[RMDB]
RNA sequence: GGGAACGACUCGAGUAGAGUCGAAAAGAUAUGGACCUCCUUGGAUUUAUAGGUGAGGUACAUCGGAAACGAUGUAUGGAGCCUAUUGUCAGGAGUGUCCUAAGUCAAACCGGUCUUCGGACCGGAACUAAUUAUUCUCCUUCGGGAGAAUAAUUAGAAAAGAAACAACAACAACAAC
Reactivity to DMS in 0.01 (KOAc 150mM, MgCl2 10mM, bicine 150mM(pH8.5), 24C), signal-to-noise 5, nucleotides 027 to 126: g000a060u000a300u010g000g000a020c000c000u000c000c000u000u010g030g010a030u000u010u000a010u000a010g010g010u010g000a300g000g010u000a000c010a010u000c000g000g010a150a110a160c000g010a000u000g000u000a000u000g010g020a300g010c000c010u000a000u000u010g000u010c010a050g000g000a030g000u010g010u000c000c000u000a010a080g000u000c040a100a130a210c010c000g000g000u010c000u010u010c180g010g000a010c010c010g000g010a010a070
Reactivity to 2A3 in 0.01 (KOAc 150mM, MgCl2 10mM, bicine 150mM(pH8.5), 24C), signal-to-noise 5, nucleotides 027 to 126: g020a010u080a070u140g000g010a010c000c000u050c010c020u110u190g230g010a070u300u300u060a020u040a000g010g020u060g020a050g080g060u000a010c010a000u010c000g030g000a050a080a070c020g000a000u010g020u020a010u060g130g060a020g000c000c000u010a000u010u010g010u000c000a000g020g010a030g040u160g000u000c010c000u000a070a020g050u020c040a020a030a130c000c000g010g010u010c010u030u090c300g110g010a000c000c000g000g000a000a000
This 177-nucleotide RNA was probed chemically with DMS and 2A3.
Conditions: 150 mM KOAc, 10 mM MgCl2 and 150 mM bicine (pH 8.5), 24 C.
Source: RMDB library TTRDEL, as collected in RNAgym.
DMS adducts were read by reverse transcription with MarathonRT.
Values are in units of 0.01, from 0 to 300, in steps of 10.